[RMDB]
RNA sequence: GGGAACGACUCGAGUAGAGUCGAAAAUCAACCACCUUCGGGUGGUUGAAAAGAGCUAGCAAAGGAUCCAAGCUAGCAAAAGAAAAAGAAAAGGAACCAAAAAAAGUCAGAACUUCGGUUCUGACAAGCAUAAUAAUGUCUUCGGACAUUAUUAUGCAAAAGAAACAACAACAACAAC
Reactivity to DMS in 0.01 (KOAc 150mM, MgCl2 10mM, bicine 150mM(pH8.5), 24C), signal-to-noise 1, nucleotides 027 to 126: u000c000a000a000c000c000a020c000c010u000u000c210g050g070g010u000g010g000u010u000g000a000a040a160a130g000a150g000c000u000a000g020c000a060a020a300g000g000a080u000c000c000a030a050g000c000u000a000g010c000a080a020a120a080g000a130a030a070a100a030g010a010a030a180a090g000g010a020a030c010c020a030a010a080a150a060a060a160g010u000c000a010g000a010a010c020u000u010c300g010g000u000u000c000u000g000a020c010a040a080